The data come from the RNA Mapping Database (RMDB), library VIROID.
This 177-nucleotide RNA was probed chemically with DMS and 2A3.
The 2A3 profile rests on 7,294 reads.
For DMS the reverse transcriptase was MarathonRT.
The DMS profile rests on 4,518 reads.
[RMDB]
RNA sequence: GGGAACGACUCGAGUAGAGUCGAAAACUUCUCAGAAUCCAGCGAGAGGCGUGGAGAGAGGGCCGCGGUGCUCUGGAGUAGAGGCUCUGCCUUCGAAACACCAUCGAUCGUCCCUUCUUCUUUACCUACCAUAAGAAAGGUUCGCCUUUCUUAUGGUAAAAGAAACAACAACAACAAC
Reactivity to DMS in 0.01 (KOAc 150mM, MgCl2 10mM, bicine 150mM(pH8.5), 24C), signal-to-noise 4, nucleotides 027 to 126: c140u010u000c010u000c010a170g010a150a110u000c130c140a110g000c100g010a040g000a030g010g000c070g020u010g000g010a030g000a050g010a050g000g000g020c120c010g010c010g020g000u000g000c020u000c010u000g010g010a070g000u000a040g010a040g010g010c000u020c220u010g010c020c010u010u000c020g000a170a110a130c010a020c190c010a030u000c000g000a110u010c010g000u000c010c000c000u000u010c010u000u000c010u000u000u000a100c040c060u000
Reactivity to 2A3 in 0.01 (KOAc 150mM, MgCl2 10mM, bicine 150mM(pH8.5), 24C), signal-to-noise 4, nucleotides 027 to 126: c000u030u000c010u000c000a040g110a100a120u090c090c040a030g050c060g060a050g000a020g100g040c050g080u110g010g010a020g000a020g010a020g010g000g000c010c010g040c020g000g020u000g000c000u000c000u010g000g010a000g000u010a000g000a000g010g000c030u050c150u300g040c020c000u130u130c010g000a010a020a010c010a020c100c010a010u010c000g040a300u030c010g000u010c020c000c000u020u020c020u020u000c000u020u030u030a020c000c000u010
The RNA was probed in 150 mM KOAc, 10 mM MgCl2 and 150 mM bicine (pH 8.5) at 24 C.